[RMDB]
RNA sequence: GGGAACGACUCGAGUAGAGUCGAAAAUUUCCUAUACUUUGUCCUAUGGCCAGCUUUCUCCUUAUUACGAAGAGAUUGCGGGAUGUGGGUGCAGAGUGGGAAAAUCUGAGUUCGGUCAUCUUUGUUGACCACUUUUAUACUUCGGUAUAAAAGUGGUAAAAGAAACAACAACAACAAC
Reactivity to DMS in 0.01 (KOAc 150mM, MgCl2 10mM, bicine 150mM(pH8.5), 24C), signal-to-noise 2, nucleotides 027 to 126: u000u010u000c000c010u000a150u020a080c010u000u000u010g000u000c010c000u000a020u000g000g000c000c010a060g000c000u000u000u000c010u000c010c040u000u010a120u000u010a160c260g000a050a030g010a020g000a030u010u000g010c000g000g020g000a030u000g040u010g000g000g030u020g020c010a010g000a010g030u000g000g020g000a020a020a060a090u000c030u000g000a040g010u000u000c030g010g010u000c090a030u000c050u000u010u000g010u000u010g000
Reactivity to 2A3 in 0.01 (KOAc 150mM, MgCl2 10mM, bicine 150mM(pH8.5), 24C), signal-to-noise 2, nucleotides 027 to 126: u000u000u020c000c010u040a050u040a150c000u060u020u010g010u030c000c000u040a020u010g060g040c000c010a030g020c040u010u000u000c000u050c020c000u160u160a250u290u160a200c140g030a020a070g000a010g020a000u000u000g030c000g000g020g010a010u030g000u020g010g040g040u090g030c030a000g020a010g040u030g000g020g010a010a070a020a040u030c000u050g050a030g030u090u050c020g000g020u030c030a110u000c080u140u100u150g060u080u120g100
Chemical mapping of a 177-nucleotide RNA with DMS and 2A3.
Values are in units of 0.01, from 0 to 300, in steps of 10.